[RMDB]
RNA sequence: GGGAACGACUCGAGUAGAGUCGAAAAUAGAGCCUGAACCACCUCAGAGCGCUCAGCCGGCCCAAUUUCGUCCGCCACAUCCUCUACAGCCUCAGUCCAUUCCUCGCUAUUGGUGUCCGGCGCUGAGGUCUUCCAGUUAUCGUACUUGGUAGCCAUGCUCCCACUACCUAUUCGUAGGUAGUGGGAGAAAAGAAACAACAACAACAAC
Reactivity to 2A3 in 0.01 (KOAc 150mM, MgCl2 10mM, bicine 150mM(pH8.5), 24C), signal-to-noise 2, nucleotides 027 to 156: u130a030g060a010g050c000c030u040g010a060a030c050c000a070c010c040u030c010a000g040a010g110c100g070c070u060c090a020g050c020c000g010g070c010c000c010a020a010u000u040u130c060g020u050c020c020g060c040c030a050c010a040u040c030c040u080c060u100a110c060a050g000c010c010u020c030a010g000u040c000c000a000u010u090c020c020u040c060g070c060u070a050u030u080g000g000u080g090u140c030c020g020g000c020g000c010u010g030a010g020g010u000c000u050u040c000c020a040g020u090u010a090u100c040g030u050a060c030u050u070g030g020u030a010g060c080c010a080u160g000

An RNA of 207 nucleotides, treated with 2A3 and read out base by base. The data come from the RNA Mapping Database (RMDB), library OK3TST.